[RMDB]
RNA sequence: GGGAACGACUCGAGUAGAGUCGAAAAUGGGCUUUCGAGCCCAAAAAAACCGUAGGCUCCUCUACAGCUUUUGACGCUCGAGACACUUCGAAAGAGGUGUCGAGAGCGAUAAGCUGUAGGAGGAGCCUAAACGGAAAAACCACGAUUCGUCGUGGAAGCAGAGAUUACUAUUCGUAGUAAUCUCUGCAAAAGAAACAACAACAACAAC
Reactivity to DMS in 0.01 (KOAc 150mM, MgCl2 10mM, bicine 150mM(pH8.5), 24C), signal-to-noise 1, nucleotides 027 to 156: u000g010g040g010c010u000u000u010c270g020a100g030c000c000c000a000a000a010a080a110a030a080c000c000g000u000a000g020g010c020u010c010c030u000c010u000a020c000a000g000c000u030u010u000u000g010a210c070g020c000u000c010g040a300g000a060c010a000c000u010u000c020g000a110a160a270g000a020g000g020u000g040u000c000g000a300g010a000g030c000g000a010u000a010a000g010c000u000g000u000a040g030g010a010g040g020a010g000c000c000u000a000a000a000c010g030g010a050a040a050a070a140c040c000a020c030g030a070u000u010c230g020u010c040g030u000g000g000a040a010
Conditions: 150 mM KOAc, 10 mM MgCl2 and 150 mM bicine (pH 8.5), 24 C. Structure probing data (DMS) for a 207-nucleotide construct. It was measured as part of the RMDB library RNAMAK. For DMS the reverse transcriptase was MarathonRT.